RNA sequence: GGGAACGACUCGAGUAGAGUCGAAAAAUCUCCCUGGGUUCCUCCUCGGACCUGAGGGUCGGUCAGCCGGUGCUGGCGAUCGGGUCGCCGCUCGGUUUGGAGGGCACCGUGACCACGGGGAUCGUCACUGUUACUGACUAUUCGUAGUCAGUAACAGAAAAGAAACAACAACAACAAC
Reactivity to 2A3 in 0.01 (KOAc 150mM, MgCl2 10mM, bicine 150mM(pH8.5), 24C), signal-to-noise 5, nucleotides 027 to 126: a000u050c050u010c020c000c010u030g060g010g000u050u060c000c000u010c000c010u030c060g110g000a040c010c000u070g100a210g030g030g070u100c050g040g000u040c020a030g030c030c000g110g080u250g030c110u230g030g030c020g010a020u070c090g120g100g110u080c040g010c030c010g010c010u010c010g040g000u010u070u090g070g020a030g000g010g000c040a040c020c030g050u070g020a020c010c030a020c050g020g000g000g030a050u060c040g120u070c070a030
Reactivity to DMS in 0.01 (KOAc 150mM, MgCl2 10mM, bicine 150mM(pH8.5), 24C), signal-to-noise 6, nucleotides 027 to 126: a100u010c110u010c000c000c010u000g000g010g010u000u000c010c010u000c030c020u000c170g010g000a030c020c010u010g020a130g020g010g020u010c060g010g010u000c070a110g010c090c010g000g010u000g010c010u010g040g010c020g010a020u000c150g010g010g010u000c050g020c060c050g000c010u000c010g010g010u000u000u000g020g000a070g000g010g010c100a040c040c050g010u000g000a070c040c020a230c120g010g000g000g000a060u010c100g010u000c130a200